[RMDB]
RNA sequence: GGGAACGACUCGAGUAGAGUCGAAAAGAUAUGGACAGCUAUGAAGAUGGACCACAACAGCCCGAUGAAAGCUUCGGAAACGAAGCUUUCAUCGGGACAUGUGGUACAUUGGAGCUGUCCUAAGUCACACUGUAACGGAGUUCGCUCCGUUACAGUGAAAAGAAACAACAACAACAAC
Reactivity to DMS in 0.01 (KOAc 150mM, MgCl2 10mM, bicine 150mM(pH8.5), 24C), signal-to-noise 1, nucleotides 027 to 126: g000a050u000a300u010g010g020a030c020a000g010c020u000a300u000g010a160a270g000a010u000g000g000a030c000c000a010c000a030a090c220a250g000c000c020c000g000a010u000g000a030a020a010g010c000u010u010c000g000g030a090a120a290c020g040a020a030g000c010u000u000u000c000a010u010c000g020g040g010a000c000a040u000g000u000g000g040u000a000c000a000u010u000g000g010a020g030c000u000g000u000c000c000u000a010a060g010u000c000a300
The record gives the reactivity of an RNA of 177 nucleotides to DMS. The reactions ran in a buffer of 150 mM KOAc, 10 mM MgCl2 and 150 mM bicine (pH 8.5), at 24 C.